[RMDB]
RNA sequence: GGGAACGACUCGAGUAGAGUCGAAAACUCGCCCUUCGGGGCGAGAAAAAAACCUUUGUGCACGGAGGAGACGGGAGACUACUCCCAUUGGGAGUUCUCAUCGAUCGUCUCUCCCCACCCGUGCACUCUGGUAAAAACGGCUAGUUCGCUAGCCGAACCGAUAUUUCACUUUCGAGUGAAAUAUCGGAAAAGAAACAACAACAACAAC
Reactivity to 2A3 in 0.01 (KOAc 150mM, MgCl2 10mM, bicine 150mM(pH8.5), 24C), signal-to-noise 1, nucleotides 027 to 156: c010u010c010g000c010c000c070u010u040c300g040g030g030g000c020g000a000g020a010a000a000a000a010a010a000c010c010u000u000u010g010u000g020c000a000c010g010g000a000g030g030a030g060a010c000g030g050g000a020g010a010c060u010a000c010u080c000c080c080a230u160u230g000g020g000a020g000u140u070c010u040c050a130u140c000g030a080u080c000g010u010c000u000c000u000c000c000c000c000a050c000c000c000g000u000g030c000a010c000u000c000u000g010g010u120a150a030a100a000a030c000g000g000c000u000a000g040u080u030c190g000c160u000a010g000c000c000g000a010a010